[RMDB]
RNA sequence: GGGAACGACUCGAGUAGAGUCGAAAAGAUAUGGAAAUAUGAGCUAUGAAGUACGAGAAAUUCGGAAACGAACACUGUUGUAUGGAGCUCUAAGUUUCCUAAGUCAAAACCGGUGUUCGCACCGGAAGCUUUACUUCUCGUUCGCGAGAAGUAAAGCAAAAGAAACAACAACAACAAC
Reactivity to DMS in 0.01 (KOAc 150mM, MgCl2 10mM, bicine 150mM(pH8.5), 24C), signal-to-noise 1, nucleotides 027 to 126: g020a010u000a260u010g000g000a000a000a050u000a300u000g010a040g000c000u000a220u000g000a140a060g000u010a000c000g000a010g020a140a070a300u030u000c020g000g000a070a070a080c020g000a010a040c160a110c140u030g000u060u000g000u000a000u000g000g000a120g000c000u000c000u000a050a090g000u000u000u010c000c000u000a000a110g010u000c050a110a030a050a150c020c000g000g010u000g010u000u010c220g050c050a020c000c010g010g010a070a060
Reactivity to 2A3 in 0.01 (KOAc 150mM, MgCl2 10mM, bicine 150mM(pH8.5), 24C), signal-to-noise 1, nucleotides 027 to 126: g010a020u020a060u090g010g080a000a000a000u030a060u140g000a000g000c000u000a300u300g020a010a010g000u020a000c000g000a010g100a200a230a270u040u010c030g000g020a020a020a000c030g000a010a000c060a010c070u110g100u190u030g030u030a010u010g020g040a010g000c000u000c000u010a170a140g010u000u000u000c000c000u000a050a000g010u000c050a050a000a070a090c030c010g000g020u020g030u060u130c300g050c040a000c000c000g000g020a030a000